RNA sequence: GGGAACGACUCGAGUAGAGUCGAAAAGGAUAUGGAAAGGAUGAUACAAGGUCUGAGAACGGCAGGAUAAAUGCUAUUUUAGCAAAAGCAUUUAACCCUUGGGUUAAAUCAUUUUUCGGCGAUGACCUCAUCACCCGUUAUUCGUAACGGGUGAUGAAAAAGAAACAACAACAACAAC
Reactivity to DMS in 0.01 (KOAc 150mM, MgCl2 10mM, bicine 150mM(pH8.5), 24C), signal-to-noise 3, nucleotides 027 to 126: g000g010a070u010a030u000g020g000a060a030a080g010g020a070u000g000a100u000a050c100a120a080g020g000u010c030u010g000a160g020a080a110c110g020g050c050a040g000g010a110u010a030a060a090u000g010c010u000a110u010u010u010u000a080g010c190a040a030a060a070g030c090a010u010u010u020a040a040c090c000c060u010u000g030g020g010u000u000a010a040a080u030c040a080u000u000u010u000u000c060g010g000c030g030a060u010g000a070c050c030
Reactivity to 2A3 in 0.01 (KOAc 150mM, MgCl2 10mM, bicine 150mM(pH8.5), 24C), signal-to-noise 2, nucleotides 027 to 126: g020g020a030u060a070u230g050g010a050a010a050g010g010a040u060g010a020u050a110c020a040a000g050g010u040c050u050g030a000g000a190a030c070g120g010c010a020g000g050a020u080a070a070a010u060g000c000u040a150u120u150u050u080a030g030c030a030a030a010a040g000c000a000u000u000u010a010a020c030c020c040u060u140g150g010g010u020u030a050a050a020u020c040a060u050u100u010u060u060c010g030g010c000g000a030u070g050a050c020c040
Structure probing data (DMS and 2A3) for a 177-nucleotide construct.
For 2A3, 1,384 sequencing reads were counted.
For 2A3 the reverse transcriptase was SuperScript II with manganese.
It was measured as part of the RMDB library OK2TRN.
For DMS the reverse transcriptase was MarathonRT.